[RMDB]
RNA sequence: GGGAACGACUCGAGUAGAGUCGAAAAAAAGAUAUGGAAUCACAUACGUCGUUGAUCUGGUAGUUGCCAGCUAGUCGGAAACGACUAGGGCACUCUACCAGGGAGACGUGUGAUUCCUAAGUCAAAACUAAGCUGAUAGGUUCGCCUAUCAGCUUAGAAAAGAAACAACAACAACAAC
Reactivity to DMS in 0.01 (KOAc 150mM, MgCl2 10mM, bicine 150mM(pH8.5), 24C), signal-to-noise 2, nucleotides 027 to 126: a050a070a080g000a020u000a300u000g000g000a010a000u000c000a000c010a120u020a170c040g020u000c000g020u000u010g010a030u010c010u010g000g020u000a000g000u010u000g020c010c000a140g030c010u000a000g010u000c010g020g010a110a070a180c000g020a020c010u000a010g000g000g000c020a080c210u000c000u010a000c000c000a000g000g010g010a010g010a020c010g020u010g010u000g000a010u000u000c000c000u010a010a080g010u000c030a060a060a100a280
Reactivity to 2A3 in 0.01 (KOAc 150mM, MgCl2 10mM, bicine 150mM(pH8.5), 24C), signal-to-noise 2, nucleotides 027 to 126: a000a000a020g080a030u090a050u120g010g000a010a000u010c000a010c060a090u300a190c070g020u000c000g200u280u010g020a000u020c000u000g000g010u010a030g040u090u230g040c010c020a140g300c050u000a000g000u000c000g020g000a040a020a080c020g000a000c000u000a000g000g000g000c020a030c080u070c000u010a000c000c000a000g000g000g000a040g000a000c000g020u000g000u010g000a000u000u010c000c000u000a060a010g030u020c010a000a040a070a220
Notes: The record gives the reactivity of an RNA of 177 nucleotides to DMS and 2A3. Conditions: 150 mM KOAc, 10 mM MgCl2 and 150 mM bicine (pH 8.5), 24 C. For 2A3 the reverse transcriptase was SuperScript II with manganese.